[RMDB]
RNA sequence: GGGAACGACUCGAGUAGAGUCGAAAAAGGUCAACUGUAAAUUGCAGGACACCUUGGAAGUCAGGCAGUGCUUCGCAAAGAUUAAUGCAUGCCUUGAGAAUUUCGACUUUCAAUGUGUGGUCCCCAAACCCAUUCAUUACCGAAUGACGAAAUGCUCUAGUAGCAUCCUUUUCGAAGGAUGCUACUAAAAAGAAACAACAACAACAAC
Reactivity to 2A3 in 0.01 (KOAc 150mM, MgCl2 10mM, bicine 150mM(pH8.5), 24C), signal-to-noise 4, nucleotides 027 to 156: a000g070g020u040c030a060a060c020u000g010u080a100a170a200u220u200g040c020a010g000g020a000c010a000c020c000u010u010g020g030a010a000g040u020c020a000g000g000c020a080g240u050g070c020u030u080c060g030c130a220a160a020g080a120u080u230a120a050u170g020c000a010u020g020c000c000u030u100g070a100g040a160a100u110u200u190c070g000a000c020u030u040u030c040a050a060u020g050u000g000u000g080g060u040c010c000c000c000a040a080a110c040c010c000a020u020u030c020a020u080u140a080c080c100g070a090a040u090g020a060c040g070a030a070a060u130g000c020u050c010
Reactivity to DMS in 0.01 (KOAc 150mM, MgCl2 10mM, bicine 150mM(pH8.5), 24C), signal-to-noise 1, nucleotides 027 to 156: a020g030g000u010c050a070a220c000u010g030u010a030a110a210u030u010g000c040a010g020g020a240c080a050c000c000u000u000g020g000a030a100g010u000c040a110g030g000c050a080g010u000g000c010u000u000c100g020c010a110a090a230g020a300u010u010a020a110u000g210c030a030u000g020c000c000u000u010g010a120g010a140a120u000u000u000c140g000a140c040u000u010u000c080a010a030u000g000u000g010u000g010g020u000c040c020c020c080a030a050a140c140c030c000a090u000u000c020a050u060u000a130c090c080g000a050a080u000g010a130c050g000a070a040a100u000g010c100u000c010
An RNA of 207 nucleotides, treated with 2A3 and DMS and read out base by base. Conditions: 150 mM KOAc, 10 mM MgCl2 and 150 mM bicine (pH 8.5), 24 C. DMS (dimethyl sulfate) methylates the pairing face of unpaired adenines and cytosines. For 2A3, 1,560 sequencing reads were counted.